[RMDB]
RNA sequence: GGGAACGACUCGAGUAGAGUCGAAAACAUCACCAAUACCACACACUUUGUGGAUGUCUCCUUACAUGACACUUCCAGUUAGGGAAAUCUGCUAGAGAAACCAACCUAAUGGGUCACACAUACUCUGAUAUAUGAGCAGAACCAAAAAUGUAAGCAACACCCUCAUUACGUUCGCGUAAUGAGGGUGAAAAGAAACAACAACAACAAC
Reactivity to 2A3 in 0.01 (KOAc 150mM, MgCl2 10mM, bicine 150mM(pH8.5), 24C), signal-to-noise 4, nucleotides 027 to 156: c030a100u090c040a030c080c020a010a050u140a200c020c020a050c000a030c020a040c160u130u070u170g010u040g030g010a010u060g040u000c020u010c020c010u000u010a020c010a050u020g030a040c040a050c100u080u020c050c000a080g050u090u080a120g020g040g020a000a060a020u000c000u000g030c050u070a030g020a020g040a220a070a040c080c000a020a060c020c020u080a120a110u110g030g020g020u110c070a060c000a000c010a050u080a160c000u040c040u060g070a030u080a020u010a070u300g080a020g000c000a020g010a100a140c020c010a100a060a000a000a020u050g000u050a030a000g000c010a000a060
Reactivity to DMS in 0.01 (KOAc 150mM, MgCl2 10mM, bicine 150mM(pH8.5), 24C), signal-to-noise 1, nucleotides 027 to 156: c020a030u000c060a300c070c010a000a100u010a200c020c040a040c030a070c150a110c130u000u000u020g040u010g000g070a080u000g010u020c030u010c020c000u010u010a060c010a030u030g010a150c000a090c060u000u000c030c040a160g010u000u000a100g000g000g000a130a030a150u000c010u000g030c090u000a160g000a150g000a170a020a070c050c000a010a120c020c000u000a070a080u000g010g020g010u000c040a100c070a030c160a180u010a100c000u000c040u000g000a100u030a080u000a040u010g010a070g030c010a050g000a010a060c040c030a000a060a040a100a090u000g010u000a060a010g000c120a090a210